[RMDB]
RNA sequence: GGGAACGACUCGAGUAGAGUCGAAAACAGGCUGGAUUACAUCAAUAGUAAGUUGAGCAGAAGUAAACAGAACAAGAAGUACUGCGGUUAUUCAAGUUCAAAGUUCACACUAUCGCAAUAAAUAUAAUAACACGUCAGAUUUCGAUCUGACGUGUUAAAAAGAAACAACAACAACAAC
Reactivity to DMS in 0.01 (KOAc 150mM, MgCl2 10mM, bicine 150mM(pH8.5), 24C), signal-to-noise 1, nucleotides 027 to 126: c070a130g000g010c000u000g000g010a120u010u010a080c160a110u000c040a010a020u000a130g050u010a030a070g020u000u000g020a070g000c010a040g000a050a050g020u000a040a040a070c090a040g010a030a050c020a040a150g030a040a030g010u010a030c070u000g000c150g050g010u010u000a100u000u020c030a020a200g000u010u000c080a080a150a090g030u000u000c030a050c050a070c090u000a110u000c070g000c080a010a120u020a080a030a090u000a020u000a020a100